Structure probing data (DMS and 2A3) for a 177-nucleotide construct. Reactivities are given for positions 27 through 126. For 2A3, 2,023 sequencing reads were counted. Source: RMDB library 15KREP, as collected in RNAgym. For DMS the reverse transcriptase was MarathonRT.
RNA sequence: GGGAACGACUCGAGUAGAGUCGAAAAGGUUACAUUGCUGGAAUACAGAAUUUUAAGGAAACGCUGUAUUAUCAGAACAAUGUCUUUAUGUCUGAAGCUAAAUGCUGGGUGGAAACCGAUCUGAAGAGAUCCAUCUUAUGUUCGCAUAAGAUGGAUCAAAAGAAACAACAACAACAAC
Reactivity to DMS in 0.01 (KOAc 150mM, MgCl2 10mM, bicine 150mM(pH8.5), 24C), signal-to-noise 3, nucleotides 027 to 126: g010g000u010u010a040c000a020u000u010g000c000u000g000g000a020a000u000a000c000a010g020a080a070u000u000u010u000a090a280g010g010a050a020a050c300g020c000u010g000u000a000u000u000a080u020c000a010g000a100a140c020a010a000u000g000u000c030u000u000u000a050u020g000u000c040u000g000a100a040g010c020u000a070a100a100u010g020c040u000g000g010g000u000g000g010a060a080a060c060c030g000a060u010c070u000g010a120a100g010a200
Reactivity to 2A3 in 0.01 (KOAc 150mM, MgCl2 10mM, bicine 150mM(pH8.5), 24C), signal-to-noise 3, nucleotides 027 to 126: g020g010u070u050a010c000a010u000u030g010c000u000g020g010a000a010u020a010c000a000g030a040a050u140u070u080u090a190a080g160g030a040a050a000c030g000c000u010g020u000a000u020u030a110u090c000a000g010a080a040c010a000a020u030g010u040c000u070u100u010a090u100g050u000c010u040g110a070a020g020c030u070a170a090a040u170g000c020u030g000g010g080u060g050g000a060a010a040c010c020g030a040u040c040u110g040a100a020g040a020